Structure probing data (2A3 and DMS) for a 177-nucleotide construct.
[RMDB]
RNA sequence: GGGAACGACUCGAGUAGAGUCGAAAAGCAGACCACAUAUGUGGUCGAUGCCAUGGAGGCCCAUCAGUUUAUCAAGGCUCCUGGCAUCACUACUGCUAUUGAGCAGGCUGCUCUAGCAGCGGCCAACUCCACCAUACUGGUUCGCCAGUAUGGUGGAAAAAGAAACAACAACAACAAC
Reactivity to 2A3 in 0.01 (KOAc 150mM, MgCl2 10mM, bicine 150mM(pH8.5), 24C), signal-to-noise 3, nucleotides 027 to 126: g040c000a010g010a030c030c000a020c050a060u300a150u300g040u000g030g000u020c030g000a000u010g000c000c000a060u240g020g010a050g070g240c010c020c030a110u100c050a060g080u060u160u170a260u220c060a100a030g010g000c000u000c000c000u000g030g000c000a000u010c000a000c020u200a050c030u010g000c000u040a040u090u260g080a060g000c060a010g140g030c020u040g000c000u000c030u090a090g030c040a000g000c020g020g000c000c000a030a060c010
Reactivity to DMS in 0.01 (KOAc 150mM, MgCl2 10mM, bicine 150mM(pH8.5), 24C), signal-to-noise 2, nucleotides 027 to 126: g000c040a050g010a100c000c000a020c000a290u030a130u010g020u000g000g000u000c110g010a000u000g010c000c010a020u010g040g000a040g050g020c010c000c050a070u020c210a120g010u010u010u020a080u010c120a100a180g000g010c010u000c000c010u000g000g010c010a020u000c030a050c130u000a120c070u010g000c010u000a120u000u000g010a030g030c160a130g020g000c040u000g020c020u000c050u000a080g020c120a020g010c040g000g010c030c060a070a090c160
DMS (dimethyl sulfate) methylates the pairing face of unpaired adenines and cytosines. The RNA was probed in 150 mM KOAc, 10 mM MgCl2 and 150 mM bicine (pH 8.5) at 24 C. 2A3 adducts were read by reverse transcription with SuperScript II with manganese. The data come from the RNA Mapping Database (RMDB), library OK2TRN.